Source: RMDB library OK1LIB, as collected in RNAgym. An RNA of 177 nucleotides, treated with 2A3 and DMS and read out base by base. The RNA was probed in 150 mM KOAc, 10 mM MgCl2 and 150 mM bicine (pH 8.5) at 24 C. Reactivities are rounded to 0.1 and cut off at 0 and 3. DMS adducts were read by reverse transcription with MarathonRT.
RNA sequence: GGGAACGACUCGAGUAGAGUCGAAAAGUUGUGAUGAAGUCAUAGACGCCGAUAACGCCGUUACUGUCUCCAUUGACAACAUCAUCGAUCAUGCCAGCGGUAAGGUCCCGCAGCUUCUCGUCAAUGGUACACUAGACCCUUUCGAGGGUCUAGUGUAAAAAGAAACAACAACAACAAC
Reactivity to 2A3 in 0.01 (KOAc 150mM, MgCl2 10mM, bicine 150mM(pH8.5), 24C), signal-to-noise 4, nucleotides 027 to 126: g050u060u050g000u010g020a050u040g050a070a010g010u000c000a020u030a100g090a040c040g020c040c030g070a150u110a190a030c060g070c070c030g040u030u010a020c040u040g010u070c010u010c040c030a020u010u090g080a040c030a050a000c010a020u100c000a040u100c070g070a040u080c040a010u070g070c010c000a060g050c060g010g040u130a170a050g070g050u040c010c000c010g010c000a000g020c000u060u030c010u050c050g080u030c020a030a140u080g020g020
Reactivity to DMS in 0.01 (KOAc 150mM, MgCl2 10mM, bicine 150mM(pH8.5), 24C), signal-to-noise 4, nucleotides 027 to 126: g030u010u000g010u010g000a040u000g030a080a160g020u000c060a030u000a140g000a060c060g030c050c010g000a110u020a050a160c050g000c200c040g000u000u020a040c120u020g000u010c030u010c050c080a020u000u030g010a000c030a060a170c030a050u000c050a060u000c160g050a050u010c080a020u010g000c040c050a080g020c040g010g030u020a110a110g000g010u000c060c050c030g020c050a070g000c060u000u000c090u000c070g000u010c040a030a060u000g000g010